[RMDB]
RNA sequence: GGGAACGACUCGAGUAGAGUCGAAAAAAUAAACCUAUUAAUACAGGUAAAUGACCAAGUGUAAUGGCCUAUAGUAGAAUCCUGUAUGAACUUUUAAACUUUCUUACUCAAGGCUUUCACUAACGUCUGAGGGAUAGAUGGAAUGAGUUUGAAGACAAUUAGGAUUUAAUUUCGAUUAAAUCCUAAUAAAAGAAACAACAACAACAAC
Reactivity to DMS in 0.01 (KOAc 150mM, MgCl2 10mM, bicine 150mM(pH8.5), 24C), signal-to-noise 1, nucleotides 027 to 156: a060a100u000a090a080a240c020c000u000a110u010u000a110a080u010a050c030a020g000g000u000a090a090a080u010g010a040c010c000a070a240g000u000g080u000a130a130u010g030g030c000c020u000a190u010a180g000u000a030g030a250a090u010c030c010u000g000u010a030u020g010a070a110c070u000u000u020u000a050a120a120c060u000u010u000c000u000u000a120c030u000c030a050a080g010g000c060u000u010u020c080a050c090u000a050a050c120g010u010c050u010g070a150g000g010g020a130u000a030g020a080u000g020g020a060a150u000g010a060g010u000u000u000g010a040a070g000a120c070a060
Reactivity to 2A3 in 0.01 (KOAc 150mM, MgCl2 10mM, bicine 150mM(pH8.5), 24C), signal-to-noise 2, nucleotides 027 to 156: a000a000u190a060a040a000c040c000u040a040u120u090a100a040u030a000c000a010g030g000u000a010a140a120u160g010a010c010c010a030a060g070u040g060u180a210a200u090g010g000c010c050u090a050u060a130g090u020a060g080a060a060u050c000c020u020g000u010a040u110g080a020a040c040u040u010u110u300a080a060a030c010u120u080u020c020u090u220a040c000u000c060a070a100g010g010c000u070u060u150c090a070c100u070a090a020c030g020u000c020u040g010a050g050g000g000a000u060a100g070a030u110g060g020a000a060u080g000a050g060u030u040u090g080a060a090g070a020c040a140